[RMDB]
RNA sequence: GGGAACGACUCGAGUAGAGUCGAAAAGCGUACUACAUGGAACUGGAGAGCAACAGCUAUCAUGUGCUGAAAUCCCAAAUAGGAUUUCACCCUGAUAGACAUGCUCUCCUCAGUACAUGUAUCGCAAAAGACUUCCACAGUUCGCUGUGGAAGUCAACAGAUGCUUAUCCUUCGGGAUAAGCAUCUGAAAAGAAACAACAACAACAAC
Reactivity to 2A3 in 0.01 (KOAc 150mM, MgCl2 10mM, bicine 150mM(pH8.5), 24C), signal-to-noise 3, nucleotides 027 to 156: g010c010g020u070a080c030u000a010c040a010u000g010g020a030a000c010u030g000g000a010g010a000g000c010a030a150c070a100g060c000u000a000u010c000a010u060g120u140g090c200u000g010a000a000a000u020c020c020c040a150a300a140u280a090g000g000a000u000u000u000c000a010c000c000c000u000g000a020u020a000g030a030c000a020u030g000c000u000c000u010c000c000u010c000a000g000u000a000c000a010u000g000u000a030u290c010g000c000a000a040a040a040g000a000c030u000u000c000c000a000c000a010g020u100u140c210g060c120u010g000u000g000g000a000a000g010u000c000a000a000
Reactivity to DMS in 0.01 (KOAc 150mM, MgCl2 10mM, bicine 150mM(pH8.5), 24C), signal-to-noise 1, nucleotides 027 to 156: g010c010g010u010a080c090u000a010c000a020u000g010g000a170a160c050u000g000g010a050g030a020g000c000a090a080c110a180g010c010u010a010u000c010a000u000g020u000g050c030u020g020a010a020a040u000c000c000c050a070a190a170u010a020g000g000a000u000u000u000c000a010c050c010c020u000g010a050u010a000g000a040c010a300u000g010c070u000c010u010c010c010u000c000a050g000u000a160c000a020u000g020u000a040u000c020g020c010a080a070a160a110g000a040c020u040u000c000c010a020c010a030g000u000u000c270g020c000u010g000u020g000g020a010a000g000u000c000a010a110